[RMDB]
RNA sequence: GGGAACGACUCGAGUAGAGUCGAAAAGAAAAGAGCGUAAUCGCGUCUUGACGUGAGUGAGCCUAGACUGUAGACUAUCCCAAGUGGGAUAGGAUAUCUCACAAUACGCUGAUCUACAGUCAAAAGAAGGAGCAUGACCAUUCGUGGUCAUGCUCCUAAAAGAAACAACAACAACAAC
Reactivity to 2A3 in 0.01 (KOAc 150mM, MgCl2 10mM, bicine 150mM(pH8.5), 24C), signal-to-noise 1, nucleotides 027 to 126: g190a010a020a000a000g000a010g000c000g000u010a020a020u030c000g030c030g000u040c080u150u150g180a060c000g000u000g000a000g000u000g000a000g050c060c000u040a000g000a000c000u000g000u000a000g000a000c000u000a020u010c000c000c090a230a300g300u300g060g000g020a020u000a000g060g010a000u080a000u110c000u000c000a020c000a000a090u030a070c000g000c080u000g010a010u000c000u000a000c000a000g000u060c000a010a010a000a000g050a010
An RNA of 177 nucleotides, treated with 2A3 and read out base by base.
2A3 adducts were read by reverse transcription with SuperScript II with manganese.
The reactions ran in a buffer of 150 mM KOAc, 10 mM MgCl2 and 150 mM bicine (pH 8.5), at 24 C.